[RMDB]
RNA sequence: GGGAACGACUCGAGUAGAGUCGAAAAUACAAGAAGCGGGGACGGAGAAGGCUAUGUUGGCCGGGCGACGGUUGUCCCGGUUUAAGCGUGUAGGCUGGUUUUCCAGGCAAAUCCGGAAGAAAAUGAACAAUAACGAUCGAUUCGUCGAUCGUUAUUGAAAAGAAACAACAACAACAAC
Reactivity to 2A3 in 0.01 (KOAc 150mM, MgCl2 10mM, bicine 150mM(pH8.5), 24C), signal-to-noise 1, nucleotides 027 to 126: u110a000c030a020a000g110a100a030g040c010g030g020g000g000a010c040g010g010a040g030a060a040g010g000c000u050a020u190g070u070u160g050g000c050c000g000g020g010c010g020a070c100g080g000u090u140g060u080c000c010c000g010g000u030u020u030a040a000g010c030g000u020g020u080a020g110g050c020u010g000g000u040u020u040u070c010c000a010g030g000c000a070a090a000u000c020c030g050g070a020a000g070a030a080a010a040u200g030a040a020
Reactivity to DMS in 0.01 (KOAc 150mM, MgCl2 10mM, bicine 150mM(pH8.5), 24C), signal-to-noise 5, nucleotides 027 to 126: u000a100c110a060a080g010a100a070g010c050g010g000g000g010a060c070g010g010a080g010a140a090g000g000c050u000a060u010g010u000u010g000g020c010c000g000g000g000c300g010a080c130g000g010u010u000g000u010c020c000c000g000g000u000u000u010a070a080g010c050g000u000g000u000a070g000g020c020u000g010g000u010u010u000u000c010c010a150g000g020c060a050a070a100u010c030c010g020g010a060a070g000a050a050a080a080u010g010a060a150